[RMDB]
RNA sequence: GGGAACGACUCGAGUAGAGUCGAAAAGAUAUGGAACUUCCAUAGGACGAAGAACAUAGUUCGGAAACGAACUAUGGGAGUCCAAAAUGGAGAGUUCCUAAGUCAAAACACGACGUUCGCGUCGUGACAGUAAGAGGAAGUUCGCUUCCUCUUACUGAAAAGAAACAACAACAACAAC
Reactivity to DMS in 0.01 (KOAc 150mM, MgCl2 10mM, bicine 150mM(pH8.5), 24C), signal-to-noise 8, nucleotides 027 to 126: g010a060u000a300u010g000g000a010a000c010u000u000c000c000a020u010a300g020g000a010c000g010a120a180g020a180a210c010a000u000a010g010u010u000c010g000g000a100a110a220c010g020a000a010c000u000a000u000g000g000g000a070g010u000c000c010a040a040a160a060u000g010g010a050g010a040g020u000u000c000c000u000a020a080g000u010c040a130a090a160a210c020a010c000g000a010c000g020u010u020c260g010c020g020u000c000g020u000g000a140
Reactivity to 2A3 in 0.01 (KOAc 150mM, MgCl2 10mM, bicine 150mM(pH8.5), 24C), signal-to-noise 7, nucleotides 027 to 126: g030a010u080a060u170g000g000a000a010c000u030u000c010c010a020u070a140g010g010a010c030g220a300a120g010a070a010c010a000u000a000g010u000u000c000g010g020a040a050a030c010g000a000a000c000u000a000u010g000g000g010a010g000u000c010c000a080a180a030a030u100g000g000a210g030a010g160u000u010c000c000u000a120a010g060u020c040a050a000a090a130c020a000c000g000a000c010g010u060u110c300g010c010g120u010c000g000u000g010a060
Source: RMDB library TTRDES, as collected in RNAgym.
This 177-nucleotide RNA was probed chemically with DMS and 2A3.
DMS adducts were read by reverse transcription with MarathonRT.
DMS (dimethyl sulfate) methylates the pairing face of unpaired adenines and cytosines.
The reactions ran in a buffer of 150 mM KOAc, 10 mM MgCl2 and 150 mM bicine (pH 8.5), at 24 C.